[RMDB]
The data come from the RNA Mapping Database (RMDB), library OK2TST. Chemical mapping of a 177-nucleotide RNA with 2A3 and DMS. DMS adducts were read by reverse transcription with MarathonRT. The reactions ran in a buffer of 150 mM KOAc, 10 mM MgCl2 and 150 mM bicine (pH 8.5), at 24 C. The DMS profile rests on 9,155 reads.
RNA sequence: GGGAACGACUCGAGUAGAGUCGAAAAUAGAGCAUCCAAGUGCGUUGCUCCGUAUCGUUCUUGCAGUCCGCCAGCUGGGCAAAGAGAUACUGCAAGCGCUUGGCGUCGUGCGUAAUGCCCAGCAGCAGAUUAAUACGUCGUUCGCGACGUAUUAAUCAAAAGAAACAACAACAACAAC
Reactivity to 2A3 in 0.01 (KOAc 150mM, MgCl2 10mM, bicine 150mM(pH8.5), 24C), signal-to-noise 6, nucleotides 027 to 126: u130a020g040a000g010c010a000u000c020c030a260a120g190u100g130c100g060u040u050g010c010u020c010c030g030u060a120u100c020g040u040u030c010u010u070g070c030a060g040u050c030c060g010c050c030a060g000c020u040g000g010g010c000a020a050a010g130a010g010a040u050a090c040u100g010c020a040a020g020c010g000c030u090u150g100g000c020g030u090c050g020u030g030c000g020u050a050a060u070g010c010c010c010a010g010c010a000g030c010a010
Reactivity to DMS in 0.01 (KOAc 150mM, MgCl2 10mM, bicine 150mM(pH8.5), 24C), signal-to-noise 7, nucleotides 027 to 126: u000a090g010a080g010c020a040u000c010c030a200a120g020u010g010c090g000u000u000g000c020u000c050c110g020u000a040u000c040g000u000u000c010u000u010g020c100a070g000u000c080c080g010c040c060a130g020c020u000g000g020g020c010a030a070a130g000a140g010a140u000a030c030u010g020c010a070a130g000c050g000c020u000u000g010g000c300g010u000c110g030u000g010c030g010u000a060a130u000g000c000c000c000a040g010c050a130g020c130a080